[RMDB]
RNA sequence: GGGAACGACUCGAGUAGAGUCGAAAAUUAGCGUUAGGAUUAGAUGGACAGGUUCUUACAAGCACUGGGGCAGCAUCUGCACCUGCUUUUGAAGCACCUGCUGCUGGUGGUGCUGCAUUACAAUUACCUACUUGGAUAACAACGAGGGGAACUGUUAACGCCACAUUUUAUUCGUAAAAUGUGGCGUAAAAGAAACAACAACAACAAC
Reactivity to 2A3 in 0.01 (KOAc 150mM, MgCl2 10mM, bicine 150mM(pH8.5), 24C), signal-to-noise 2, nucleotides 027 to 156: u040u030a010g010c010g020u050u060a040g030g010a020u000u030a090g100a210u070g020g010a010c010a010g040g000u010u010c000u090u090a050c040a060a050g000c010a010c040u060g000g000g000g040c000a000g010c000a060u060c020u050g030c010a050c070c070u110g030c020u200u190u050u210g070a040a000g000c000a040c000c030u060g010c010u000g000c010u090g010g250u050g020g000u010g000c010u010g000c000a050u070u140a100c050a100a130u090u070a080c000c020u060a120c020u000u070g030g010a020u040a170a120c090a030a010c040g010a010g000g010g020g020a010a040c010u000g080u130u030a050
Reactivity to DMS in 0.01 (KOAc 150mM, MgCl2 10mM, bicine 150mM(pH8.5), 24C), signal-to-noise 1, nucleotides 027 to 156: u000u000a070g020c050g030u000u000a080g000g010a130u010u000a080g020a190u000g000g010a110c050a020g040g020u010u000c020u010u000a160c110a030a030g010c020a000c030u000g000g030g020g110c000a020g000c070a050u020c030u000g070c010a140c080c080u000g000c100u020u020u000u010g000a080a100g010c050a030c040c020u000g000c040u000g030c030u000g010g040u000g020g010u000g010c000u000g000c050a060u010u000a060c030a060a080u000u000a130c080c070u000a050c030u000u010g010g000a150u010a300a030c050a140a120c060g000a060g030g000g000g040a030a040c040u000g030u020u000a070

Chemical mapping of a 207-nucleotide RNA with 2A3 and DMS. The RNA was probed in 150 mM KOAc, 10 mM MgCl2 and 150 mM bicine (pH 8.5) at 24 C. For DMS, 2,146 sequencing reads were counted.